[RMDB]
Overview:
This 207-nucleotide RNA was probed chemically with 2A3 and DMS. For DMS, 2,890 sequencing reads were counted. The reactions ran in a buffer of 150 mM KOAc, 10 mM MgCl2 and 150 mM bicine (pH 8.5), at 24 C. The 2A3 profile rests on 1,749 reads. DMS adducts were read by reverse transcription with MarathonRT.

RNA sequence: GGGAACGACUCGAGUAGAGUCGAAAAAUCUGUUCGCAGAUUGAGCGGGGGUCUAGUACUCGAGGUUUAGACAUGCUCUGAAGCCUCCACGGAGCAACAGCUAAACUACCCACCGAGCGGCUAGACGGAGGCACCCUUAAGGGCAAUUCGUUGCCAAUUAUUCUUAUCCCUUCGGGGAUAAGAAUAAAAAAGAAACAACAACAACAAC
Reactivity to 2A3 in 0.01 (KOAc 150mM, MgCl2 10mM, bicine 150mM(pH8.5), 24C), signal-to-noise 3, nucleotides 027 to 156: a000u020c010u020g010u040u090c220g040c060a020g040a070u070u080g050a040g100c180g000g050g010g000g010u010c000u010a010g000u030a030c000u000c020g020a080g010g050u020u030u010a020g040a100c050a130u160g000c010u000c000u030g060a130a020g010c000c000u000c000c000a020c000g000g020a000g050c010a070a080c040a100g170c020u030a020a000a020c040u110a140c080c070c090a040c070c010g000a020g020c130g070g000c180u000a000g000a020c000g010g010a020g000g000c000a010c000c020c000u050u250a120a130g050g010g000c020a020a040u130u120c180g080u110u010g000c010c000a040a110
Reactivity to DMS in 0.01 (KOAc 150mM, MgCl2 10mM, bicine 150mM(pH8.5), 24C), signal-to-noise 2, nucleotides 027 to 156: a000u000c010u000g030u000u000c200g040c030a020g000a070u010u010g000a100g030c040g020g000g020g050g040u000c010u000a040g000u000a030c040u010c010g000a110g000g020u000u010u000a040g010a070c050a300u010g030c010u010c000u020g010a080a070g030c030c010u000c010c020a300c070g010g010a020g020c000a080a090c080a120g030c000u000a040a020a030c020u020a040c070c020c030a300c070c050g000a020g000c000g010g010c000u000a080g000a020c000g010g010a080g080g060c030a080c000c010c000u010u000a070a120g000g010g010c030a020a160u000u010c150g000u000u000g010c030c030a080a170